Notes: The record gives the reactivity of an RNA of 177 nucleotides to DMS and 2A3. DMS adducts were read by reverse transcription with MarathonRT.
[RMDB]
RNA sequence: GGGAACGACUCGAGUAGAGUCGAAAAACGUGUGGCUAUGGGUUUAAGGAUCGCAAGGUGGAGUGCAAGCAGAUAAUGGCGCAAGAGCACAAGAUCGAACGACCCGAAUCGAUGUGUCCGAGUGCUAGUCAUCCUAUAGUUUCGACUAUAGGAUGACAAAAGAAACAACAACAACAAC
Reactivity to DMS in 0.01 (KOAc 150mM, MgCl2 10mM, bicine 150mM(pH8.5), 24C), signal-to-noise 7, nucleotides 027 to 126: a080c100g020u000g030u010g010g010c070u010a060u000g010g010g000u010u010u000a100a120g010g010a050u000c060g030c070a040a200g000g010u010g000g020a260g010u000g010c040a100a100g010c060a070g000a100u010a060a130u000g000g010c040g000c080a050a150g000a100g010c010a030c030a070a260g000a070u010c020g010a080a080c080g000a090c040c030c010g000a070a040u000c010g010a050u010g000u000g010u010c020c020g000a220g000u000g010c060u010a130
Reactivity to 2A3 in 0.01 (KOAc 150mM, MgCl2 10mM, bicine 150mM(pH8.5), 24C), signal-to-noise 4, nucleotides 027 to 126: a000c060g040u060g040u080g050g000c020u050a080u100g050g010g040u020u040u080a090a030g060g000a060u050c020g010c060a030a040g050g010u050g020g040a030g020u030g010c020a030a060g000c010a010g030a150u130a150a110u220g070g000c030g000c040a040a040g030a010g090c000a000c010a020a050g050a040u020c010g000a040a030c050g060a080c000c000c000g010a030a010u020c010g010a040u070g030u020g030u060c010c020g030a050g030u040g020c040u050a050
The 2A3 profile rests on 5,635 reads. It was measured as part of the RMDB library OK2TST.